[RMDB]
Chemical mapping of a 177-nucleotide RNA with 2A3 and DMS. Reactivities are given for positions 27 through 126.
RNA sequence: GGGAACGACUCGAGUAGAGUCGAAAACGCGGACCUGCAAAGAAGAAGAUAGGGGCAGAGGGGGAGUGAGCCUCGUCGUCGACGAAGGGGUGCACUCCAAAGCUCCGAACUGGCGUCGUCCGGCUCUGAGUCGUAUAUUGUUCGCAAUAUACGACUCAAAAGAAACAACAACAACAAC
Reactivity to 2A3 in 0.01 (KOAc 150mM, MgCl2 10mM, bicine 150mM(pH8.5), 24C), signal-to-noise 1, nucleotides 027 to 126: c130g050c030g000g030a020c000c030u130g000c040a190a120a090g150a110a010g030a070a000g040a110u190a210g020g000g000g020c040a010g070a050g130g120g020g000g010a130g020u020g010a000g020c000c000u000c020g040u000c000g040u030c070g090a270c060g060a080a020g000g070g000g000u030g030c010a000c010u000c000c030a000a060a000g020c000u000c000c000g000a020a000c020u010g010g030c010g010u110c010g020u050c010c020g110g010c050u030c040u060
Reactivity to DMS in 0.01 (KOAc 150mM, MgCl2 10mM, bicine 150mM(pH8.5), 24C), signal-to-noise 1, nucleotides 027 to 126: c140g040c000g020g000a060c000c130u000g000c080a080a070a170g020a090a090g020a100a040g020a080u000a230g020g010g000g020c020a050g000a260g000g000g020g020g010a020g040u000g020a200g020c010c000u000c000g010u000c000g020u010c190g010a100c030g000a020a080g000g000g000g020u000g000c050a000c010u000c030c050a020a080a120g010c010u010c000c000g000a070a160c040u000g010g020c060g020u000c180g030u000c000c060g010g000c050u000c050u000
Source information
The DMS profile rests on 912 reads. The data come from the RNA Mapping Database (RMDB), library VIROID. 2A3 adducts were read by reverse transcription with SuperScript II with manganese. The RNA was probed in 150 mM KOAc, 10 mM MgCl2 and 150 mM bicine (pH 8.5) at 24 C.